[RMDB]
RNA sequence: GGGAACGACUCGAGUAGAGUCGAAAAGAAGCCGCAUAACUUUCAUGAUCCAUUCGGGCGGAAAACGAGUUGCGAAGAGGAUCAUCUUCGGCUCAUGUUUUUUGAAUGCGCGCUCGAAGAACAUAUGUAAAAUUAGCACUUUCGAGUGCUAAUUUUAAAAAGAAACAACAACAACAAC
Reactivity to DMS in 0.01 (KOAc 150mM, MgCl2 10mM, bicine 150mM(pH8.5), 24C), signal-to-noise 5, nucleotides 027 to 126: g010a110a060g020c030c020g040c060a060u010a120a140c070u010u020u000c050a100u010g020a110u020c030c060a170u010u000c020g020g000g010c020g000g000a020a020a030a040c070g000a030g020u010u050g010c020g020a020a000g000a050g010g020a120u050c150a110u000c010u000u000c000g000g010c010u000c020a060u020g000u000u010u000u000u020u020g020a110a050u020g000c110g030c030g000c010u010c000g010a030a020g010a080a080c150a070u020a070u010g010
Reactivity to 2A3 in 0.01 (KOAc 150mM, MgCl2 10mM, bicine 150mM(pH8.5), 24C), signal-to-noise 8, nucleotides 027 to 126: g060a020a010g050c020c020g000c060a060u100a210a120c050u040u130u130c050a070u110g090a100u030c030c010a070u020u030c000g010g000g000c020g020g000a020a010a000a000c010g000a010g010u060u200g150c010g010a000a000g010a020g110g110a180u160c030a130u010c020u000u000c000g010g000c000u000c020a040u140g040u000u000u010u010u030u080g180a130a070u160g050c110g000c010g000c060u010c010g000a000a010g020a030a040c050a050u130a070u210g070